RNA sequence: GGGAACGACUCGAGUAGAGUCGAAAAGAUAUGGACUAAUUCUGGCGUGAUCCAGUGGACAUGUUACAGCUCGGAAACGAGCUGAAUAACAACAGCCACGGAUCACGCCAGAAUUAGUCCUAAGUCAGAUUACUUGAUAGUUCGCUAUCAAGUAAUCAAAAGAAACAACAACAACAAC
Reactivity to DMS in 0.01 (KOAc 150mM, MgCl2 10mM, bicine 150mM(pH8.5), 24C), signal-to-noise 2, nucleotides 027 to 126: g010a010u000a300u020g020g000a010c000u000a010a020u000u000c000u000g010g000c000g010u000g020a000u000c000c000a160g050u000g000g030a070c120a180u000g010u000u000a080c000a030g010c000u000c000g000g000a150a120a270c010g010a000g030c000u000g000a100a050u010a070a020c010a020a090c300a180g000c010c010a000c010g030g000a010u000c000a000c000g000c030c000a000g000a000a000u000u000a000g000u010c000c000u000a000a040g010u000c060a140
Source: RMDB library TTRINS, as collected in RNAgym.
The record gives the reactivity of an RNA of 177 nucleotides to DMS.
For DMS, 2,900 sequencing reads were counted.
For DMS the reverse transcriptase was MarathonRT.
Reactivities are given for positions 27 through 126.